[RMDB]
Chemical mapping of a 177-nucleotide RNA with DMS and 2A3. It was measured as part of the RMDB library OK2TST.

RNA sequence: GGGAACGACUCGAGUAGAGUCGAAAAUCAAUGCUCGGUUAGGAAAGGGAGACAUUGAGUUGCGCCCUAAACGUGACAAAAAGAGUGAUGCAUCCCUCCCAUCGGUACGAAUAUGGGGUGCUGUCAAAGUGUUGGUAGGUUUCGACCUACCAACACUAAAAGAAACAACAACAACAAC
Reactivity to DMS in 0.01 (KOAc 150mM, MgCl2 10mM, bicine 150mM(pH8.5), 24C), signal-to-noise 1, nucleotides 027 to 126: u020c040a020a030u000g020c030u000c060g000g020u010u010a180g010g020a090a180a140g000g030g000a050g010a120c010a000u000u000g000a120g020u010u000g000c010g040c040c010c050u000a060a080a150c100g000u020g010a070c060a110a040a030a050a060g000a030g050u010g000a100u000g010c010a020u010c000c050c000u000c060c000c020a140u020c080g000g020u010a080c150g000a030a030u000a040u000g010g010g020g000u000g000c000u010g000u000c070a020a090
Reactivity to 2A3 in 0.01 (KOAc 150mM, MgCl2 10mM, bicine 150mM(pH8.5), 24C), signal-to-noise 1, nucleotides 027 to 126: u020c010a000a020u050g000c000u000c020g130g000u120u090a090g060g170a220a050a040g140g100g020a030g010a070c000a040u020u000g020a020g020u000u070g020c000g010c000c010c000u100a060a090a040c050g030u030g040a000c080a010a120a030a050a070g060a040g100u040g010a030u060g000c000a060u000c000c020c000u040c020c010c000a040u090c130g060g120u130a080c090g030a100a070u070a070u150g000g000g000g000u000g000c000u060g000u010c000a140a110
For 2A3 the reverse transcriptase was SuperScript II with manganese. The RNA was probed in 150 mM KOAc, 10 mM MgCl2 and 150 mM bicine (pH 8.5) at 24 C.